[RMDB]
RNA sequence: GGGAACGACUCGAGUAGAGUCGAAAAAGUUUGUAUAACGACUGUUUAAUUCUCCCAGUCGAUGCCAAUUGGUGUUUACAGACGAGUAUGGUAUUGACCAUAUGAUACUAUUCUCUCUCUCAGGAGAGGAGAAUAGAUAACUACAAAGGAGUCACAACUGAUGAAAAUGGUUCGCCAUUUUCAUCAGAAAAGAAACAACAACAACAAC
Reactivity to 2A3 in 0.01 (KOAc 150mM, MgCl2 10mM, bicine 150mM(pH8.5), 24C), signal-to-noise 2, nucleotides 027 to 156: a000g030u030u040u000g050u050a110u080a170a040c000g020a000c000u000g090u050u220u120a170a070u240u000c020u020c000c020c000a000g000u000c000g040a060u070g000c010c060a230a300u130u300g040g000u060g000u040u100u030a020c030a020g000a000c020g010a010g030u030a020u020g010g000u070a120u150u270g110a060c000c000a010u000a020u050g050a020u030a100c000u000a000u020u000c010u000c000u000c000u000c010u000c090a110g000g240a030g060a020g020g090a010g000a000a000u000a000g000a000u030a040a050c080u170a030c120a040a100a040g100g000a060g010u080c040a050c030a230a080
Reactivity to DMS in 0.01 (KOAc 150mM, MgCl2 10mM, bicine 150mM(pH8.5), 24C), signal-to-noise 2, nucleotides 027 to 156: a100g020u010u020u000g020u000a100u000a040a170c040g020a040c030u000g030u000u010u000a040a150u010u010c050u000c040c040c020a160g020u000c030g020a080u000g050c030c020a110a190u000u000g010g000u010g000u010u000u000a160c070a110g010a100c050g010a190g030u010a020u000g000g000u000a160u010u030g000a080c000c010a020u000a050u000g000a180u000a080c000u000a020u000u000c000u010c000u010c020u000c020u010c140a230g080g000a020g010a040g040g030a020g010a030a030u010a010g020a120u010a030a130c090u000a130c100a060a050a080g000g000a170g040u000c020a070c070a090a170